An RNA of 177 nucleotides, treated with DMS and 2A3 and read out base by base. The reactions ran in a buffer of 150 mM KOAc, 10 mM MgCl2 and 150 mM bicine (pH 8.5), at 24 C. Values cover nucleotides 27 to 126.
[RMDB]
RNA sequence: GGGAACGACUCGAGUAGAGUCGAAAAGAUAUGGACUCAAACAGCUUUUGACGCCGUGUCGGAAACGACACGCGCGAUAAGCUGUGAGUCCUAAGUCGCGAUCCAACAAAGUUCGCUUUGUUGGAAACUGAUGCCUAGUGUUCGCACUAGGCAUCAGAAAAGAAACAACAACAACAAC
Reactivity to DMS in 0.01 (KOAc 150mM, MgCl2 10mM, bicine 150mM(pH8.5), 24C), signal-to-noise 2, nucleotides 027 to 126: g000a020u000a190u010g000g000a010c000u010c010a080a100a210c010a010g030c000u000u000u020u020g000a200c030g000c020c060g010u000g000u000c000g010g000a020a020a070c000g020a000c010a010c010g010c170g050c010g010a050u010a020a010g020c000u000g000u000g000a010g020u000c000c000u000a010a070g000u000c020g010c190g000a170u010c000c000a010a030c000a020a000a010g020u010u010c200g010c000u000u000u000g010u000u000g000g000a010a050a060
Reactivity to 2A3 in 0.01 (KOAc 150mM, MgCl2 10mM, bicine 150mM(pH8.5), 24C), signal-to-noise 2, nucleotides 027 to 126: g000a000u030a010u050g010g000a020c000u010c040a200a170a300c010a030g020c000u130u250u300u300g250a100c010g000c010c020g010u000g020u020c000g010g000a030a040a000c000g020a000c020a010c000g030c040g000c000g000a030u080a230a010g000c020u000g030u000g000a000g000u000c010c000u000a000a010g000u000c000g000c040g160a100u000c010c010a010a010c020a020a000a020g020u100u130c200g090c160u000u000u000g010u010u000g020g000a020a010a000